[RMDB]
RNA sequence: GGGAACGACUCGAGUAGAGUCGAAAACAACAAGACGUAACAACAACUAGCCGAUAUAACAACUAUGAUACUGAUAACAAAUAUCGGCUAAACAACAACAAUUCAGUAUCAUAUUACGUCGAACAAAGGGAAGUGAAUCUUUCGAGAUUCACUUCCCAAAAGAAACAACAACAACAAC
Reactivity to 2A3 in 0.01 (KOAc 150mM, MgCl2 10mM, bicine 150mM(pH8.5), 24C), signal-to-noise 1, nucleotides 027 to 126: c060a000a070c050a090a010g000a000c000g000u040a100a000c140a020a020c040a010a030c100u000a010g000c000c000g000a000u000a000u090a210a000c110a000a180c070u030a000u000g000a000u050a000c000u000g000a020u210a290a100c100a220a080a000u000a000u000c000g000g000c000u010a000a000a000c000a000a000c000a010a000c010a010a000u110u010c000a000g000u000a000u070c000a000u000a000u020u000a000c000g000u000c050g000a060a020c100a130a190a050
About this RNA
The record gives the reactivity of an RNA of 177 nucleotides to 2A3. The RNA was probed in 150 mM KOAc, 10 mM MgCl2 and 150 mM bicine (pH 8.5) at 24 C. Values cover nucleotides 27 to 126. Source: RMDB library OK1LIB, as collected in RNAgym.